Notes
This 177-nucleotide RNA was probed chemically with 2A3 and DMS. Reactivities are given for positions 27 through 126. 2A3 adducts were read by reverse transcription with SuperScript II with manganese. Source: RMDB library OK2TRN, as collected in RNAgym.
RNA sequence: GGGAACGACUCGAGUAGAGUCGAAAAUGAUCGAGAGAUCUAACGAUGUACGCGAGUCAAUCGCACAGACUCGAGCGAAAGCUCGGUCGAAAGACCGCGUACAUCGGUCGGCAAGUGUGGAGUCAAACAUAGGAUACGUGUUCGCACGUAUCCUAUGAAAAGAAACAACAACAACAAC
Reactivity to 2A3 in 0.01 (KOAc 150mM, MgCl2 10mM, bicine 150mM(pH8.5), 24C), signal-to-noise 3, nucleotides 027 to 126: u100g000a010u000c000g000a020g010a010g000a100u000c000u010a090a040c010g000a000u010g000u010a010c000g000c000g040a090g050u000c030a000a060u070c030g020c110a140c020a110g050a000c020u090c250g010a010g000c000g020a150a010a010g010c000u000c000g020g010u030c030g010a000a010a000g000a000c000c000g000c000g020u000a010c000a000u000c000g000g020u040c020g020g040c050a160a180g100u080g080u200g170g050a020g020u040c060a050a040a040
Reactivity to DMS in 0.01 (KOAc 150mM, MgCl2 10mM, bicine 150mM(pH8.5), 24C), signal-to-noise 8, nucleotides 027 to 126: u020g000a000u000c010g000a270g000a220g010a010u010c000u010a120a110c020g010a020u000g000u000a000c000g010c000g010a110g020u000c000a030a210u000c080g020c210a120c210a230g000a010c030u010c020g010a000g000c000g010a090a080a140g000c000u000c000g000g010u000c010g000a030a030a260g000a000c000c000g010c000g010u000a010c010a000u000c000g010g010u010c050g010g000c050a060a090g010u020g020u000g010g000a080g000u000c050a070a110a190